[RMDB]
RNA sequence: GGGAACGACUCGAGUAGAGUCGAAAACAGAGAAGACUUCAUAGGAGACUCAUUAUUGUUUACUGGACAUCAGGUGCUAUAUUGUAUAGCAUUCACAUUCCACAGGUGAGGAAACAGGCUCAGAGGAAUAAGUGGCAUGCCAAGAUCACUGAGUAUAGAUUAGCUAGCUGUUCGCAGCUAGCUAAUCAAAAGAAACAACAACAACAAC
Reactivity to 2A3 in 0.01 (KOAc 150mM, MgCl2 10mM, bicine 150mM(pH8.5), 24C), signal-to-noise 1, nucleotides 027 to 156: c020a000g040a000g010a100a010g040a040c060u070u000c090a170u170a100g070g040a040g060a020c020u040c040a120u020u300a130u160u020g040u020u130u060a190c020u090g060g000a010c020a120u160c060a040g000g000u000g000c040u020a020u020a090u090u300g100u140a000u020a020g030c020a000u070u080c000a080c040a040u080u080c000c000a000c040a030g130g000u030g010a020g060g000a020a180a000c020a020g000g100c000u000c010a030g020a000g070g040a030a050u040a140a000g050u090g060g040c030a060u110g010c000c010a030a010g040a110u060c010a000c100u040g020a000g010u020a180u080a130